This 207-nucleotide RNA was probed chemically with 2A3.
For 2A3, 1,392 sequencing reads were counted.
Reactivities are rounded to 0.1 and cut off at 0 and 3.
Conditions: 150 mM KOAc, 10 mM MgCl2 and 150 mM bicine (pH 8.5), 24 C.
[RMDB]
RNA sequence: GGGAACGACUCGAGUAGAGUCGAAAAAUUCAGGGCACGGAGUCGGUGCCAGAUCGUGCGGCUUCGGCGCCAGUUCGUGCGAGAGCUUCGCUCGCGAACUCUUCGUGGAACGGCCGUCGCUCGUGGAUCGGCCGUCUUCCGGGUUCCUGCUCCCACGCAGUUAACGUGGGUUCGCCCACGUUAACUGAAAAGAAACAACAACAACAAC
Reactivity to 2A3 in 0.01 (KOAc 150mM, MgCl2 10mM, bicine 150mM(pH8.5), 24C), signal-to-noise 2, nucleotides 027 to 156: a020u210u110c010a020g000g010g000c050a000c030g000g000a000g000u000c010g010g000u020g080c140c020a060g030a010u060c090g070u100g080c030g020g020c000u000u010c000g000g010c040g060c060c010a020g010u020u030c100g070u100g050c060g020a000g000a000g000c160u020u010c000g050c040u170c240g120c030g050a000a000c000u000c060u300u120c010g020u030g050g000a010a020c010g000g010c000c000g000u010c000g010c000u290c020g010u040g000g010a000u000c000g000g000c000c000g000u000c010u200u030c000c000g010g010g010u060u300c000c000u010g010c020u030c020c000c000a000c060g020